Chemical mapping of a 177-nucleotide RNA with DMS and 2A3. For 2A3, 1,437 sequencing reads were counted.
[RMDB]
RNA sequence: GGGAACGACUCGAGUAGAGUCGAAAAGCCAACAGCAGUUAGCUCUCAGCAUAAAAUCUGCCCUGAGAUGAAACAUAAAUGUCACCAACAUAUACUGACAGUGACUGAUUGGCCAGAUUUCGGCUGGACUACCGAUCGCAUUCGUGCGAUCGGUAGUAAAAGAAACAACAACAACAAC
Reactivity to DMS in 0.01 (KOAc 150mM, MgCl2 10mM, bicine 150mM(pH8.5), 24C), signal-to-noise 2, nucleotides 027 to 126: g010c000c060a170a020c110a050g080c150a080g010u010u050a090g000c100u000c060u010c000a000g000c040a020u040a040a070a030a070u000c120u040g000c180c020c070u000g000a050g000a070u050g040a050a070a050c240a090u080a070a200a050u000g010u000c000a000c020c100a060a020c180a140u020a070u000a060c220u000g000a010c140a060g000u000g010a060c040u000g000a070u000u000g000g040c260c000a050g000a120u000u000u000c170g000g000c000u000g020g000
Reactivity to 2A3 in 0.01 (KOAc 150mM, MgCl2 10mM, bicine 150mM(pH8.5), 24C), signal-to-noise 3, nucleotides 027 to 126: g070c010c000a000a000c030a040g020c000a020g040u060u100a060g020c000u000c000u000c010a000g000c000a020u140a200a100a020a030u030c010u040g020c010c000c010u060g040a010g000a040u110g080a120a080a010c020a060u200a040a200a020u130g030u040c030a010c050c000a020a050c110a050u140a020u100a210c070u060g030a070c000a020g020u030g040a060c000u020g010a150u050u140g000g020c020c000a000g000a050u020u040u080c020g080g000c040u010g020g020